The data come from the RNA Mapping Database (RMDB), library OK1LIB. This 177-nucleotide RNA was probed chemically with 2A3 and DMS. 2A3 adducts were read by reverse transcription with SuperScript II with manganese. Reactivities are given for positions 27 through 126. The RNA was probed in 150 mM KOAc, 10 mM MgCl2 and 150 mM bicine (pH 8.5) at 24 C.
[RMDB]
RNA sequence: GGGAACGACUCGAGUAGAGUCGAAAAGAUAACCGCAUCGACGAAGUCGGACAGGUCAGAAACUCGUUUGCCGACAUCCGGAACUACCUCGAGACGGCAGCAGAUCAGGCCGACGCGAUCGCCGGCCCCAUCACCGGUGAUUCGUCACCGGUGAUGGAAAAGAAACAACAACAACAAC
Reactivity to 2A3 in 0.01 (KOAc 150mM, MgCl2 10mM, bicine 150mM(pH8.5), 24C), signal-to-noise 6, nucleotides 027 to 126: g100a050u160a080a050c000c040g050c050a070u060c040g060a060c050g070a180a020g050u050c010g000g020a060c030a070g000g080u080c050a050g180a110a140a070c090u090c090g080u070u130u130g050c000c000g030a050c060a070u030c040c000g060g020a090a080c040u130a110c080c040u080c060g060a090g020a050c000g050g000c000a010g000c010a020g020a080u070c030a020g070g000c010c000g020a050c030g030c060g050a080u150c060g000c050c000g010g040c000c000
Reactivity to DMS in 0.01 (KOAc 150mM, MgCl2 10mM, bicine 150mM(pH8.5), 24C), signal-to-noise 3, nucleotides 027 to 126: g000a130u020a110a070c070c090g010c090a070u000c050g000a090c110g030a140a060g020u000c020g000g000a060c030a150g030g000u000c020a160g000a080a090a090c140u060c130g010u030u040u020g010c000c000g000a050c070a180u020c010c050g010g000a110a070c140u020a110c110c020u000c090g000a070g000a160c030g000g000c020a040g040c080a050g010a090u000c030a140g010g000c010c010g000a010c030g010c140g030a090u010c020g000c000c000g000g020c040c080